Source: RMDB library OK3TST, as collected in RNAgym. An RNA of 207 nucleotides, treated with DMS and 2A3 and read out base by base. High DMS reactivity at an A or C suggests that its Watson-Crick edge is free. The reactions ran in a buffer of 150 mM KOAc, 10 mM MgCl2 and 150 mM bicine (pH 8.5), at 24 C. For 2A3, 4,263 sequencing reads were counted. Values cover nucleotides 27 to 156. 2A3 adducts were read by reverse transcription with SuperScript II with manganese.
RNA sequence: GGGAACGACUCGAGUAGAGUCGAAAAAACUGGCCACGUUAAGGAGGUGAACCAUGGCGGCCCCUAAAAAGGCUAGAACGGUCAAUGACUCAGAGAUUGAGACAGAAGAUCGACUAGCUACUCCCCGCCUCGCUCCGGCUACAUCGCCCGAAGCACGUACGUAUCCAAUAUUCGUAUUGGAUACGUAAAAAGAAACAACAACAACAAC
Reactivity to DMS in 0.01 (KOAc 150mM, MgCl2 10mM, bicine 150mM(pH8.5), 24C), signal-to-noise 4, nucleotides 027 to 156: a040a030c020u000g020g000c020c020a060c040g010u000u000a200a090g010g020a080g010g050u010g000a080a090c050c010a110u000g010g010c010g020g030c010c020c010c020u010a020a060a080a100a110g000g010c010u000a040g020a070a090c030g030g040u000c010a060a280u000g000a180c060u000c000a050g000a290g020a280u000u000g020a050g010a120c010a040g010a180a250g000a040u000c010g020a300c020u000a020g010c010u000a040c070u000c010c010c010c040g020c040c020u000c050g010c010u010c090c040g000g000c000u000a130c070a070u000c040g010c060c010c000g000a030a090g020c030a090c100g030
Reactivity to 2A3 in 0.01 (KOAc 150mM, MgCl2 10mM, bicine 150mM(pH8.5), 24C), signal-to-noise 5, nucleotides 027 to 156: a000a000c120u120g040g000c040c000a100c100g030u070u100a070a040g030g010a030g000g060u100g060a040a050c060c030a060u090g030g000c020g000g010c000c000c010c030u090a080a070a040a000a000g030g000c000u000a000g040a270a050c000g000g000u000c010a030a060u020g040a110c000u000c000a030g050a030g040a190u140u140g000a010g010a020c000a010g070a170a020g000a040u000c000g010a020c010u000a010g010c000u010a020c020u060c020c020c000c000g020c000c010u010c030g030c010u010c010c000g030g000c000u060a060c030a140u140c090g020c040c010c020g030a040a010g040c050a010c190g060